[RMDB]
An RNA of 177 nucleotides, treated with DMS and 2A3 and read out base by base. Source: RMDB libraries RFM100 and RFMREP, as collected in RNAgym.
RNA sequence: GGGAACGACUCGAGUAGAGUCGAAAAUCAAGCGUCAUAACAUAUACCACUUGCGGUAUAGCAACCAUCAAAGAUCGCAUUUGACAGUUAUGGCAAAAGGACGGCAACGUCAGCGCGUUCCGAGACGUGUACGAUAGCCAUUCGUGGCUAUCGUACAAAAAGAAACAACAACAACAAC
Reactivity to DMS in 0.01 (KOAc 150mM, MgCl2 10mM, bicine 150mM(pH8.5), 24C), signal-to-noise 4, nucleotides 027 to 126: u060c070a060a110g010c230g010u000c010a000u000a010a010c000a130u040a080u000a070c220c020a050c110u020u020g000c090g000g020u000a040u000a140g050c080a000a140c230c150a140u000c060a040a070a030g000a030u000c040g000c020a040u000u000u000g000a200c240a110g010u020u010a000u000g010g000c000a070a050a140a080g000g010a110c020g000g020c130a070a110c050g030u000c020a110g000c080g000c060g010u000u000c010c080g010a070g000a060c080g010
Reactivity to 2A3 in 0.01 (KOAc 150mM, MgCl2 10mM, bicine 150mM(pH8.5), 24C), signal-to-noise 5, nucleotides 027 to 126: u120c050a030a020g090c010g050u010c000a000u000a010a010c010a020u130a020u040a190c040c000a020c020u020u040g010c020g000g000u020a050u030a100g060c050a040a100c040c000a080u200c060a140a060a010g070a040u020c010g000c030a030u020u020u040g050a070c050a020g000u000u000a000u000g000g000c000a070a050a000a000g040g020a010c020g010g020c030a070a020c060g130u090c060a020g020c040g000c010g040u100u020c020c030g010a020g000a040c060g030